[RMDB]
RNA sequence: GGGAACGACUCGAGUAGAGUCGAAAAUUGCAGAACGGGGAAUCCCUGAUACACUCUACACAGAGCUUUGGAAAAUUGUGAAAGAGAAUAAAACUGAUGCUGGGUUUGGACGACUCACAACAGCGAGCGUAUGCAGGGGGUUCGCCCCCUGCAUACGAAAAGAAACAACAACAACAAC
Reactivity to 2A3 in 0.01 (KOAc 150mM, MgCl2 10mM, bicine 150mM(pH8.5), 24C), signal-to-noise 2, nucleotides 027 to 126: u090u100g020c030a020g060a270a100c020g000g000g000g060a050a100u130c010c000c000u000g010a010u010a010c040a010c000u000c000u080a020c030a000c020a030g050a030g130c110u180u200u090g040g030a020a100a140a110u100u040g000u000g060a170a070a070g010a010g030a050a110u200a170a080a000a010c000u060g040a030u130g060c060u010g010g080g000u010u060u090g120g030a060c060g010a050c040u000c030a020c000a120a000c000a010g060c000g100a020g020
Reactivity to DMS in 0.01 (KOAc 150mM, MgCl2 10mM, bicine 150mM(pH8.5), 24C), signal-to-noise 2, nucleotides 027 to 126: u000u030g000c100a110g000a130a100c130g000g000g000g050a120a120u060c050c000c000u010g010a040u020a090c280a130c000u000c010u000a180c040a020c040a090g010a160g000c250u010u070u020g000g020a040a040a110a130u020u000g040u000g000a050a100a100g010a150g000a070a090u050a030a030a030a060c000u000g010a080u000g000c180u000g020g010g000u000u010u010g000g030a040c040g000a000c000u000c050a020c030a040a090c150a030g000c070g020a060g000